Structure probing data (DMS) for a 177-nucleotide construct. Source: RMDB library OK2TRN, as collected in RNAgym. For DMS the reverse transcriptase was MarathonRT.
[RMDB]
RNA sequence: GGGAACGACUCGAGUAGAGUCGAAAAGUUGAAAUGGGCAUGUAUACACCGGGAAAAGGCUUGAGCAUGGAGCUGUUGGACCAGCUGAAGUACACUGGAUGUGUGAUUAAAGAAACUCUCAGAAUCAGGGUUAGUGUAUUUUCGAAUACACUAACCCAAAAGAAACAACAACAACAAC
Reactivity to DMS in 0.01 (KOAc 150mM, MgCl2 10mM, bicine 150mM(pH8.5), 24C), signal-to-noise 3, nucleotides 027 to 126: g020u010u010g010a050a090a120u000g010g030g000c100a040u000g030u010a080u000a090c060a110c110c020g000g020g010a050a120a120a050g000g000c070u000u010g010a050g020c040a050u010g000g010a060g000c050u000g000u020u000g010g000a140c060c040a070g010c040u010g010a060a060g030u010a050c060a080c020u000g000g010a070u010g010u010g010u000g000a100u000u000a080a070a070g010a100a090a110c120u000c050u000c020a070g000a090a070u030c180a040